[RMDB]
RNA sequence: GGGAACGACUCGAGUAGAGUCGAAAAGCGAAAGGAUGGCGGAUGGGAAAGCAUGCGGCCGACGACUCUGAUAUCCUAUGCAUGCGAAAGGAUGGCGCGGAUCUAACCGACGCCGCUUGUACCAGUCCUCCGUGGUCGUCUCUCGAAGCAUGCGAAAGCAUGUUGUCUAGUUCGCUAGACAACAUGCAAAAGAAACAACAACAACAAC
Reactivity to DMS in 0.01 (KOAc 150mM, MgCl2 10mM, bicine 150mM(pH8.5), 24C), signal-to-noise 2, nucleotides 027 to 156: g060c040g010a090a110a060g000g000a110u000g010g050c030g010g030a160u010g050g020g010a090a090a120g000c000a060u010g010c010g030g020c050c030g000a160c050g010a040c020u000c090u000g020a130u000a110u000c030c050u000a170u000g020c040a030u000g020c010g050a050a070a030g000g010a080u000g000g000c020g020c010g000g010a100u010c140u010a080a110c050c020g040a110c040g010c010c050g030c050u000u000g000u070a060c020c030a080g010u010c040c040u000c040c040g020u010g010g000u000c030g020u000c010u000c000u000c040g010a090a180g020c020a020u000g020c010g000a080a110a180
Reactivity to 2A3 in 0.01 (KOAc 150mM, MgCl2 10mM, bicine 150mM(pH8.5), 24C), signal-to-noise 5, nucleotides 027 to 156: g060c040g020a100a050a000g060g010a060u090g030g010c020g000g020a030u060g050g010g050a080a040a010g010c020a010u060g020c020g030g030c020c030g030a050c030g010a010c010u000c020u090g060a090u070a060u220c010c010u060a080u210g020c000a030u010g010c010g020a060a040a010g060g000a060u050g000g000c020g000c010g040g010a040u060c070u130a080a130c050c010g060a060c020g030c030c000g010c000u010u090g040u070a060c010c020a020g110u050c010c000u000c010c020g010u050g060g020u010c000g010u010c030u020c000u000c090g070a060a020g020c020a030u090g000c010g050a040a050a000